[RMDB]
RNA sequence: GGGAACGACUCGAGUAGAGUCGAAAAUGACGUCGUUUCGACGACGUCAACAUAAAAUCAGCGGUAAAUAAUUAGGAGGCGUUACCGCUGAACGCGUCCAUACGAGAGGGCUAUUCGUAGCCCUCAAGAUUUACCCCAUGUUCGCAUGGGGUAAAUCAAAAGAAACAACAACAACAAC
Reactivity to DMS in 0.01 (KOAc 150mM, MgCl2 10mM, bicine 150mM(pH8.5), 24C), signal-to-noise 3, nucleotides 027 to 126: u000g000a010c000g030u010c010g010u000u000u020c160g070a060c010g010a010c000g020u020c000a000a040c170a130u010a060a100a080a120u010c000a000g010c000g000g000u000a010a080a070u000a080a120u020u010a100g020g010a050g030g000c160g000u000u000a010c000c010g020c000u000g000a020a020c150g010c130g010u000c010c030a120u000a080c200g000a180g000a020g010g000g000c010u000a020u000u010c170g020u000a010g000c000c010c000u000c010a010a010
Reactivity to 2A3 in 0.01 (KOAc 150mM, MgCl2 10mM, bicine 150mM(pH8.5), 24C), signal-to-noise 4, nucleotides 027 to 126: u050g000a000c000g000u000c000g020u000u050u110c210g080a020c010g020a000c000g000u020c000a010a010c000a020u170a020a120a020a110u020c010a000g000c000g030g050u030a020a050a080u110a100a160u250u200a140g100g030a020g060g030c040g030u010u010a030c000c000g020c000u000g000a010a000c010g020c040g090u010c020c030a040u050a170c100g020a050g000a000g190g020g000c000u010a030u040u090c160g060u020a000g010c030c000c000u000c000a000a000